Chemical mapping of a 207-nucleotide RNA with 2A3. For 2A3 the reverse transcriptase was SuperScript II with manganese. The RNA was probed in 150 mM KOAc, 10 mM MgCl2 and 150 mM bicine (pH 8.5) at 24 C. Source: RMDB library M2RFPK, as collected in RNAgym. Values cover nucleotides 27 to 156.

[RMDB]
RNA sequence: GGGAACGACUCGAGUAGAGUCGAAAAACUAAUCCAAAGCAAGUAUAGGAGAACAGGUUUUUAACUAUUUUUAGGCAGAUAAAAAAUAGUAUCUGACAGUCUAACACUAACUGAACAAUAAGUGUUAAAAAGUCGUCUCUGUUCGCAGAGACGACAAGGAGGUCAAUUAGUUCGCUAAUUGACCUCCAAAAGAAACAACAACAACAAC
Reactivity to 2A3 in 0.01 (KOAc 150mM, MgCl2 10mM, bicine 150mM(pH8.5), 24C), signal-to-noise 1, nucleotides 027 to 156: a000c040u070a080a020u000c000c000a100a000a000g030c020a080a030g050u130a100u150a200g070g020a060g020a080a060c060a060g010g060u080u020u010u040u070a060a020c000u020a100u120u110u000u040u050a040g030g030c010a000g060a100u070a050a150a000a000a000a000u110a030g010u000a020u060c030u030g060a040c000a000g000u000c000u010a000a000c000a000c000u000a040a000c000u010g050a030a020c000a040a030u020a020a000g000u000g000u010u000a000a030a010a000a010g000u010c000g010u000c010u000c000u010g070u050u040c090g010c050a000g000a000g000a000c000g000a000c010a000a000